[RMDB]
RNA sequence: GGGAACGACUCGAGUAGAGUCGAAAACUCACUAUCACAGAACAGCAUGGAAAAGACAUGCCCCCAUGAUUCACUUACCUCCCACCGGAUCUCUCCCAUGACAUAUGGGAAUUAUGGGAGCUACAGUUCAAGAUGAGAUUUGAGUGGUGACACAGCCCGACUCGUAAGAUUUCGAUCUUACGAGUCGAAAAGAAACAACAACAACAAC
Reactivity to 2A3 in 0.01 (KOAc 150mM, MgCl2 10mM, bicine 150mM(pH8.5), 24C), signal-to-noise 3, nucleotides 027 to 156: c040u050c040a050c050u170a140u120c080a040c020a180g090a130a020c040a010g050c000a010u010g010g100a130a140a120a120g180a140c020a030u030g000c000c000c010c040c000a020u060g020a060u100u110c060a040c210u100u190a090c000c030u030c020c020c000a030c050c000g010g010a040u000c020u010c000u000c040c000c000a020u040g060a080c000a060u300a000u020g060g020g020a010a000u080u040a010u000g000g000g010a040g010c010u100a080c050a010g040u010u030c050a030a070g030a100u110g010a020g030a090u030u000u060g050a050g020u030g000g040u070g040a020c040a020c030a120g040c040c020
Reactivity to DMS in 0.01 (KOAc 150mM, MgCl2 10mM, bicine 150mM(pH8.5), 24C), signal-to-noise 1, nucleotides 027 to 156: c010u020c010a130c070u000a150u010c030a090c050a150g010a040a040c040a170g000c020a070u000g000g010a120a070a120a120g040a140c030a050u000g000c000c000c010c000c000a160u060g000a030u010u000c050a080c050u000u000a040c110c010u000c000c000c010a140c100c040g080g010a030u010c130u000c080u000c030c020c000a050u010g010a070c080a190u000a050u010g020g030g030a060a030u020u010a000u000g010g030g020a020g020c030u010a110c050a140g010u010u020c020a080a110g000a230u000g010a070g000a130u010u000u010g000a080g010u010g010g000u020g000a150c080a080c070a180g020c000c100